[RMDB]
RNA sequence: GGGAACGACUCGAGUAGAGUCGAAAAGAUAGGAGGAUCCGGGGGGUGACACCCUCGCCCUCCUGUCAAACUCCGAAUCCACCGCCGCCGUAGAUGGGCGGAGUCAGGGGCAGGGGGUAAGCUCCUGAUACUGGUCCUAGUUCGCUAGGACCAGUAUAAAAGAAACAACAACAACAAC
Reactivity to 2A3 in 0.01 (KOAc 150mM, MgCl2 10mM, bicine 150mM(pH8.5), 24C), signal-to-noise 3, nucleotides 027 to 126: g000a000u020a000g000g010a000g000g000a020u080c030c000g010g000g000g000g000g000u040g020a020c020a040c060c000c000u000c000g020c010c000c000u000c000c000u000g000u000c000a000a000a030c040u000c000c000g070a080a130u070c050c020a060c040c080g070c040c010g050c020c020g100u100a050g040a260u200g060g020g010c030g000g010a010g020u030c010a010g050g000g000g000c020a060g110g020g040g000g090u090a090a000g000c000u000c010c010u000g020
Reactivity to DMS in 0.01 (KOAc 150mM, MgCl2 10mM, bicine 150mM(pH8.5), 24C), signal-to-noise 3, nucleotides 027 to 126: g000a010u000a040g000g000a010g000g020a020u010c300c000g000g000g000g010g010g000u000g000a220c150a210c000c000c000u000c010g010c300c000c000u000c000c020u010g000u000c000a030a160a120c040u000c000c010g000a160a070u030c160c050a080c090c040g010c000c000g050c020c010g010u100a060g010a100u040g000g030g000c020g000g000a070g030u060c050a040g030g000g000g040c000a070g000g000g000g000g010u060a030a060g000c000u030c000c010u000g000
Background:
Chemical mapping of a 177-nucleotide RNA with 2A3 and DMS. It was measured as part of the RMDB library RFM100. The DMS profile rests on 3,938 reads. Reactivities are rounded to 0.1 and cut off at 0 and 3. For 2A3 the reverse transcriptase was SuperScript II with manganese.